[RMDB]
Description:
Conditions: 150 mM KOAc, 10 mM MgCl2 and 150 mM bicine (pH 8.5), 24 C. Structure probing data (2A3 and DMS) for a 177-nucleotide construct. Reactivities are given for positions 27 through 126. The data come from the RNA Mapping Database (RMDB), libraries RFM100 and RFMREP.

RNA sequence: GGGAACGACUCGAGUAGAGUCGAAAACUGCUGACAACGCUCUUGUGUUAGUGUUAAACAAAUCAAACCGCGACCAUGCGUCGCCAUAAAAUUAAUUGCAUCUGCACUGAUAUGCUCAGAUGCCAUAGACAGGUCAUACUUUCGAGUAUGACCUGUCAAAAGAAACAACAACAACAAC
Reactivity to 2A3 in 0.01 (KOAc 150mM, MgCl2 10mM, bicine 150mM(pH8.5), 24C), signal-to-noise 7, nucleotides 027 to 126: c030u050g030c060u060g010a040c050a100a040c090g050c050u050c080u190u220g050u000g040u070u040a040g010u050g100u200u100a090a200a100c130a050a090a080u250c070a110a070a040c050c060g000c000g030a000c010c010a180u280g020c130g020u010c000g000c000c000a070u260a110a090a030a040u220u210a050a040u070u010g000c010a000u000c000u000g020c070a030c070u040g110a130u100a040u300g020c030u040c050a000g000a000u000g000c010c010a020u050a050
Reactivity to DMS in 0.01 (KOAc 150mM, MgCl2 10mM, bicine 150mM(pH8.5), 24C), signal-to-noise 2, nucleotides 027 to 126: c130u010g020c010u000g000a090c000a030a090c090g000c130u030c100u000u020g010u010g010u010u000a010g050u010g010u020u000a030a100a050c190a070a080a070u000c130a100a150a070c160c190g000c030g000a000c000c020a100u010g000c060g020u000c000g050c000c220a050u020a060a070a060a110u000u000a040a070u060u040g000c000a000u020c010u000g000c080a130c050u020g000a120u040a120u000g000c150u020c050a010g010a010u000g000c010c230a040u010a060